Record summary: The record gives the reactivity of an RNA of 177 nucleotides to 2A3 and DMS. The 2A3 profile rests on 1,306 reads. High DMS reactivity at an A or C suggests that its Watson-Crick edge is free. For 2A3 the reverse transcriptase was SuperScript II with manganese. Reactivities are given for positions 27 through 126. DMS adducts were read by reverse transcription with MarathonRT. The DMS profile rests on 1,087 reads.

RNA sequence: GGGAACGACUCGAGUAGAGUCGAAAAUCAGGCCCUAUUGCUUAGUACUAUAGGUCGUCAACAACACAGCUCGAACUACAGCGCGUGGACCAAAGAUCUUGCAAGGAUGCGACUUCUCCAGUGGGUGCCUCUGAUGUUGGUUCGCCAACAUCAGAGGAAAAGAAACAACAACAACAAC
Reactivity to 2A3 in 0.01 (KOAc 150mM, MgCl2 10mM, bicine 150mM(pH8.5), 24C), signal-to-noise 2, nucleotides 027 to 126: u040c010a020g050g000c000c010c000u020a050u030u030g000c010u080u130a010g020u050a170c040u020a040u090a090g090g010u030c070g040u080c030a040a050c000a040a020c030a050c000a010g000c000u090c050g080a090a050c050u090a060c100a040g000c050g050c050g060u000g060g000a010c050c000a030a020a010g040a080u090c020u040u080g060c030a020a050g080g010a080u090g000c020g050a050c050u180u050c000u030c020c020a050g050u070g030g040g050u020g060
Reactivity to DMS in 0.01 (KOAc 150mM, MgCl2 10mM, bicine 150mM(pH8.5), 24C), signal-to-noise 2, nucleotides 027 to 126: u000c120a090g000g010c080c010c020u010a060u010u000g000c030u000u000a090g010u000a140c040u000a130u000a070g000g000u010c040g050u000c060a070a100c210a070a240c040a080c110a120g050c070u000c070g000a110a100c090u000a050c130a040g000c050g020c090g010u000g030g020a050c020c050a030a070a060g000a040u010c050u000u030g000c070a060a090g000g010a050u000g010c070g010a080c060u000u000c060u000c030c010a110g000u030g010g040g010u000g000